Source: RMDB library OK3TST, as collected in RNAgym.
This 207-nucleotide RNA was probed chemically with 2A3.
The RNA was probed in 150 mM KOAc, 10 mM MgCl2 and 150 mM bicine (pH 8.5) at 24 C.
The 2A3 profile rests on 739 reads.
RNA sequence: GGGAACGACUCGAGUAGAGUCGAAAACGGGAUGUCAGAUUCGGUUGUCUACUGUAGCGCUUUGUUCUGGUCUAUUACUGUUUCGACUCGGAUGGUAGAAUCGGUUGACGCUGACGCAGGCAAUGGACAAGGUAGAUAUCUUAGGCAGCCUGCAUCACAAGCAGCUCCUAUUCGUAGGAGCUGCUUGAAAAGAAACAACAACAACAAC
Reactivity to 2A3 in 0.01 (KOAc 150mM, MgCl2 10mM, bicine 150mM(pH8.5), 24C), signal-to-noise 2, nucleotides 027 to 156: c000g040g020g070a060u030g020u090c160a030g040a090u150u100c110g000g000u060u080g030u020c010u040a030c070u080g140u200a020g040c030g040c090u060u150u030g030u020u000c030u060g000g050u000c000u020a110u080u070a080c090u030g050u020u010u000c050g020a020c040u030c110g020g070a040u050g040g140u150a030g040a070a050u030c030g000g010u030u030g000a010c010g000c090u040g000a060c080g000c090a020g020g010c050a060a040u070g000g000a040c020a000a000g000g020u020a030g070a140u100a030u090c000u050u080a050g020g030c000a040g250c030c000u020g020c030a000u020c010a010